[RMDB]
RNA sequence: GGGAACGACUCGAGUAGAGUCGAAAAGCAGGCCCCGAAGGAGUCUCUGCGAGGGUUUUGGAAGAAACACUCCGGUGAGCCCGGCACUCUUCUAUGGAACACUGUCUGGAAUAUGGCCGUUAUUACCCGUUGAUUACAGUUUCGACUGUAAUCAACGAAAAGAAACAACAACAACAAC
Reactivity to DMS in 0.01 (KOAc 150mM, MgCl2 10mM, bicine 150mM(pH8.5), 24C), signal-to-noise 4, nucleotides 027 to 126: g000c050a040g010g010c050c010c050c050g010a090a090g010g010a070g020u000c030u010c030u000g010c130g010a040g020g030g010u000u020u000u000g020g050a130a080g000a050a040a050c020a060c060u010c010c050g010g010u010g000a120g010c100c010c020g010g020c100a040c080u000c030u000u000c060u000a090u010g010g000a060a080c100a090c070u000g010u000c020u010g000g010a100a080u010a080u000g010g010c020c030g010u000u010a060u000u010a150c040c050
Reactivity to 2A3 in 0.01 (KOAc 150mM, MgCl2 10mM, bicine 150mM(pH8.5), 24C), signal-to-noise 1, nucleotides 027 to 126: g030c040a020g010g040c000c000c000c000g080a030a060g000g060a050g040u000c040u060c060u210g040c080g010a100g020g000g000u010u060u070u120g070g040a070a030g000a040a190a000c010a010c040u000c030c000g000g000u040g040a050g020c000c020c000g020g000c000a040c020u050c020u100u000c050u040a120u170g070g050a060a000c050a010c070u050g030u090c020u040g010g070a090a030u100a090u140g050g010c000c010g010u040u020a080u080u120a110c010c010